Chemical mapping of a 177-nucleotide RNA with DMS and 2A3. For 2A3 the reverse transcriptase was SuperScript II with manganese. For 2A3, 4,253 sequencing reads were counted. For DMS, 4,980 sequencing reads were counted.

[RMDB]
RNA sequence: GGGAACGACUCGAGUAGAGUCGAAAAUGACGUCGUUUCGACGACGUCAACAUAAAAUCAGCGGUAAAUAAUUAGGAGGCGUUACCGGUGAACGCCUCCAUACGAGAGGGCUAUUCGUAGCCCUCAAUGUAGUUAAAGACUUCGGUCUUUAACUACAAAAAGAAACAACAACAACAAC
Reactivity to DMS in 0.01 (KOAc 150mM, MgCl2 10mM, bicine 150mM(pH8.5), 24C), signal-to-noise 4, nucleotides 027 to 126: u000g000a020c000g030u000c000g020u010u010u020c200g020a040c000g000a010c010g000u000c000a020a060c130a070u010a040a080a090a080u010c070a040g000c060g000g000u000a120a060a080u010a080a120u010u000a110g000g000a010g010g000c000g020u000u000a070c020c140g000g010u000g000a020a010c010g000c010c000u020c000c000a020u000a010c240g000a180g010a020g010g000g010c000u010a020u000u010c160g010u010a010g000c000c000c000u000c000a000a020
Reactivity to 2A3 in 0.01 (KOAc 150mM, MgCl2 10mM, bicine 150mM(pH8.5), 24C), signal-to-noise 4, nucleotides 027 to 126: u060g000a000c000g000u000c000g010u000u060u090c200g040a020c010g030a000c000g000u000c000a010a010c020a020u200a020a100a010a090u110c020a020g040c020g090g030u050a040a080a100u130a090a210u200u260a130g000g010a000g010g000c000g000u010u020a030c000c040g100g040u220g010a010a000c000g000c000c000u010c000c000a010u020a000c000g020a020g000a000g010g020g010c010u020a030u040u080c150g050u020a000g000c000c000c000u010c000a000a010